RNA sequence: GGGAACGACUCGAGUAGAGUCGAAAACUGCUUAACUUCGGUUAAGCAGAAAGUGAUCAAAGCCGAAAGACACCGGCAAGUGACCGGCAGCACAAGCCGUAAAAACGGAUGACUUCGGUCAUCCGAACAUUGUGAAGUCGUUCGCGACUUCACAAUGAAAAGAAACAACAACAACAAC
Reactivity to 2A3 in 0.01 (KOAc 150mM, MgCl2 10mM, bicine 150mM(pH8.5), 24C), signal-to-noise 1, nucleotides 027 to 126: c010u020g000c000u020u000a030a000c000u010u020c100g040g000u000u010a000a000g000c020a010g010a000a000a000g010u050g070a120u070c030a020a150a050g030c040c000g110a120a060a030g140a040c030a030c030c020g030g010c020a050a050g010u000g040a070c010c010g040g000c020a000g040c040a060c020a110a020g020c000c000g040u070a010a060a020a020a040c020g000g000a000u000g010a010c000u000u050c150g050g000u000c000a000u000c000c000g000a030a010
Reactivity to DMS in 0.01 (KOAc 150mM, MgCl2 10mM, bicine 150mM(pH8.5), 24C), signal-to-noise 2, nucleotides 027 to 126: c010u000g000c000u000u000a010a000c000u000u010c270g040g000u000u000a000a010g010c010a000g010a020a090a080g010u000g010a130u000c040a050a070a130g010c000c010g020a080a070a120g010a120c130a100c060c010g000g020c030a090a130g000u020g000a060c120c030g000g010c030a060g020c060a070c090a030a230g000c000c030g000u000a060a040a050a140a070c050g000g000a000u000g010a000c000u000u010c190g010g010u000c000a000u010c000c000g030a020a030